An RNA of 207 nucleotides, treated with 2A3 and DMS and read out base by base. DMS adducts were read by reverse transcription with MarathonRT. The 2A3 profile rests on 6,600 reads.
[RMDB]
RNA sequence: GGGAACGACUCGAGUAGAGUCGAAAACAUGAUUUCGAUCAUGGCUGAAGGGGUCAUGGGAGUUGCGAAGCACGUGAUGACCCUGAAGCCUCCACGGGCAAGCGUGCCGCAACAUCGAUCAUGACGGAGGCACCCUAUACUGGGGGUUCGCCCCCAACUAACUGGUGUAGUUCGCUACACCAGUUAGAAAAGAAACAACAACAACAAC
Reactivity to 2A3 in 0.01 (KOAc 150mM, MgCl2 10mM, bicine 150mM(pH8.5), 24C), signal-to-noise 4, nucleotides 027 to 156: c000a010u000g030a040u060u220u210c100g030a020u020c010a010u020g000g040c040u110g130a250a190g150g100g000g020u020c010a010u030g060g060g080a280g010u000u030g010c040g110a250a050g020c010a010c010g010u040g060a150u280g170a300c000c000c010u020g020a030a000g020c000c010u020c000c000a030c040g000g000g000c070a160a070g010c010g020u020g010c020c010g010c010a010a000c010a080u060c020g040a020u050c010a000u000g020a030c110g000g010a010g020g000c000a050c010c000c000u080a100u100a180c130u120g000g010g000g000g000u030u030c090g140c000c000c000c000c000a000a030
Reactivity to DMS in 0.01 (KOAc 150mM, MgCl2 10mM, bicine 150mM(pH8.5), 24C), signal-to-noise 2, nucleotides 027 to 156: c020a050u000g020a050u000u000u010c170g000a040u000c000a040u000g020g060c020u000g020a170a140g020g020g040g020u000c010a030u000g010g000g000a260g000u010u000g000c000g000a200a150g040c020a020c010g050u030g000a110u000g010a120c070c020c030u020g000a030a130g020c040c010u010c010c040a240c250g000g000g020c010a080a300g000c000g010u000g020c010c000g000c010a040a010c010a090u000c020g040a140u000c030a040u000g000a050c000g020g010a130g040g020c020a210c010c010c030u010a170u000a130c120u000g010g000g010g000g010u000u000c040g000c000c000c000c010c000a000a130
Values cover nucleotides 27 to 156.